[RMDB]
RNA sequence: GGGAACGACUCGAGUAGAGUCGAAAAACCAAGUCUGGGGGCCGAUGAGGGUUGGCUCAAAGUAGGUUUUUGACUUGAAAACUCAAGCUGUGACCCCAAAACGAUGGAGGUAAAUGAGAAUCCUCCUAAAACUAUGGACACUUCGGUGUCCAUAGAACUACCCGAAACGGUUCGCCGUUUCGGGUAGAAAAGAAACAACAACAACAAC
Reactivity to 2A3 in 0.01 (KOAc 150mM, MgCl2 10mM, bicine 150mM(pH8.5), 24C), signal-to-noise 1, nucleotides 027 to 156: a010c010c000a020a000g180u010c000u030g020g020g020g020g010c000c040g010a000u140g200a130g020g300g000u030u090g000g040c010u010c000a000a000a000g050u070a040g000g000u000u020u010u000u010g020a030c010u000u050g080a160a010a130a130c060u060c020a040a000g040c060u030g040u060g130a220c030c000c000c030a020a170a020a020c070g030a020u090g010g000a000g010g000u060a140a160a120u190g010a010g010a060a030u020c000c000u020c000c000u010a020a020a000a000c000u000a000u000g000g000a000c000a000c020u040u040c280g050g000u000g000u030c000c000a020u000a000g000a000a010
Notes: Chemical mapping of a 207-nucleotide RNA with 2A3. Conditions: 150 mM KOAc, 10 mM MgCl2 and 150 mM bicine (pH 8.5), 24 C. Reactivities are rounded to 0.1 and cut off at 0 and 3.